[RMDB]
RNA sequence: GGGAACGACUCGAGUAGAGUCGAAAAGGACCGGGUGGGUAGGCAGGCGUUGGAGAAACACCGAGAAACGUUGUCCCGUGCCACGGAUGUACCCCCCGCGCUCAUCGCUCGCUUUGGCGCUUGGGCGCCUUUAACCGUUCUUCGGAACGGUUAAAGGAAAAGAAACAACAACAACAAC
Reactivity to 2A3 in 0.01 (KOAc 150mM, MgCl2 10mM, bicine 150mM(pH8.5), 24C), signal-to-noise 9, nucleotides 027 to 126: g070g030a030c030c020g010g010g050u290g010g030g010u040a060g040g060c060a020g030g010c020g040u120u280g060g010a100g070a060a090a000c040a020c040c060g040a050g120a120a100a030c060g020u040u050g070u080c010c010c020g010u040g040c020c010a090c060g040g040a090u090g040u130a050c000c000c000c000c000c000g000c010g000c000u010c000a020u010c010g000c040u060c040g160c160u210u110u300g020g000c010g060c090u010u010g010g010g000c010g010
Reactivity to DMS in 0.01 (KOAc 150mM, MgCl2 10mM, bicine 150mM(pH8.5), 24C), signal-to-noise 9, nucleotides 027 to 126: g000g010a130c070c010g000g000g020u040g010g000g010u010a040g000g010c040a140g000g000c040g000u010u020g020g010a080g010a150a080a090c090a040c050c040g010a140g010a110a080a070c090g010u000u000g000u000c030c010c020g010u010g010c040c020a100c100g020g010a110u020g020u000a090c010c010c010c010c010c020g010c020g010c000u000c010a020u000c010g000c010u010c190g020c170u010u030u030g000g010c000g000c130u000u000g000g000g000c000g010